[RMDB]
RNA sequence: GGGAACGACUCGAGUAGAGUCGAAAACUCGGCCCACACGGUCGUCGCGAGCGGAUCCGUGUCGCAGAUCAGGACGCGAUCGGCGUCACGAGCCAAGGCUUCCUCCGACGCGAUCUGUCCGCGAACGGUUCCCCGGCCAAUUCGUUGGCCGGGGAACAAAAGAAACAACAACAACAAC
Reactivity to 2A3 in 0.01 (KOAc 150mM, MgCl2 10mM, bicine 150mM(pH8.5), 24C), signal-to-noise 1, nucleotides 027 to 126: c020u000c020g010g040c000c040c000a110c040a050c030g070g000u020c000g000u000c010g000c000g110a210g000c060g000g020a010u070c210c000g000u000g010u020c040g050c080a050g010a070u230c110a100g030g010a000c020g010c020g150a300u160c110g000g030c000g060u260c020a070c130g110a070g000c010c060a040a040g100g000c000u000u000c000c010u010c000c000g000a000c000g060c000g000a000u000c000u000g020u050c000c000g000c000g080a030a010c000g090